[RMDB]
RNA sequence: GGGAACGACUCGAGUAGAGUCGAAAAGCGCGCGAGAGGCGGGACGAGUGUUGGCCGUCGUCUUCCAGGACGGCGCGGACGGAGUCGGGGUGCAUACCGUGGUUCCACGGAGGAACGCUCCGCGCAGCGAGGCUUAUUCAUUCGUGAAUAAGCCUCGAAAAGAAACAACAACAACAAC
Reactivity to 2A3 in 0.01 (KOAc 150mM, MgCl2 10mM, bicine 150mM(pH8.5), 24C), signal-to-noise 2, nucleotides 027 to 126: g030c010g000c000g000c030g010a120g000a050g100g070c020g010g010g010a000c010g020a060g020u110g020u060u080g060g020c050c000g000u000c010g010u020c000u180u080c050c020a030g000g050a000c000g000g000c000g000c020g010g010a010c020g010g020a010g020u020c000g000g000g000g000u040g010c040a050u100a070c010c020g180u010g000g050u110u040c060c000a000c000g040g030a050g000g010a000a000c000g000c000u000c000c000g000c000g000c000a000g040
Reactivity to DMS in 0.01 (KOAc 150mM, MgCl2 10mM, bicine 150mM(pH8.5), 24C), signal-to-noise 8, nucleotides 027 to 126: g010c070g010c020g010c060g000a100g010a090g010g020c050g000g010g010a100c060g000a230g010u000g010u000u010g010g010c070c020g020u000c010g010u000c030u000u020c180c220a160g000g010a020c020g010g010c010g010c050g000g010a070c060g000g010a170g010u000c020g010g000g000g020u010g010c140a140u000a070c000c000g010u000g000g010u010u010c090c010a070c040g000g000a160g000g000a000a140c040g000c010u000c010c010g010c020g010c040a130g020